[RMDB]
RNA sequence: GGGAACGACUCGAGUAGAGUCGAAAAGAAUCAUAUCAUUCCUGCUAAUUGGAUGAUGACACGGACGAACAGACGCCAACACAGCUGCACUACAAGCAAUCCUAUACAACCGCAUCGGAGACAUUGGAUUUGUCCUAUCCAUAGCAUGAUUCCUAACCGUUAGCACCAAGUUCGCUUGGUGCUAACGAAAAGAAACAACAACAACAAC
Reactivity to DMS in 0.01 (KOAc 150mM, MgCl2 10mM, bicine 150mM(pH8.5), 24C), signal-to-noise 2, nucleotides 027 to 156: g020a100a040u010c050a090u010a140u010c030a220u000u000c010c030u010g010c070u010a090a140u020u000g000g020a090u010g010a050u030g000a110c110a070c030g020g020a070c030g000a060a060c080a260g020a140c010g000c060c010a070a050c050a060c030a110g010c020u030g050c030a060c050u000a040c070a060a000g000c070a040a090u000c070c010u040a140u020a100c040a080a100c010c000g000c050a070u000c060g010g020a150g010a100c050a110u000u000g000g000a160u000u000u000g000u000c020c040u020a120u000c010c000a090u010a070g040c060a100u000g010a130u000u000c010c050u000a040a160c100
Reactivity to 2A3 in 0.01 (KOAc 150mM, MgCl2 10mM, bicine 150mM(pH8.5), 24C), signal-to-noise 4, nucleotides 027 to 156: g020a000a030u060c040a040u040a030u180c050a060u130u090c000c020u010g000c040u070a120a090u160u050g020g000a010u020g070a070u090g040a050c020a010c160g030g040a020c040g010a110a010c050a080g070a020c010g030c040c020a080a020c090a010c000a060g050c030u050g020c040a030c090u120a060c050a070a000g000c010a030a050u050c000c000u090a060u020a170c100a070a050c040c050g070c070a070u060c080g030g000a040g010a030c030a020u050u110g030g020a010u080u000u110g030u040c010c000u020a000u000c010c000a020u020a010g000c010a030u050g020a030u020u020c000c010u050a060a060c040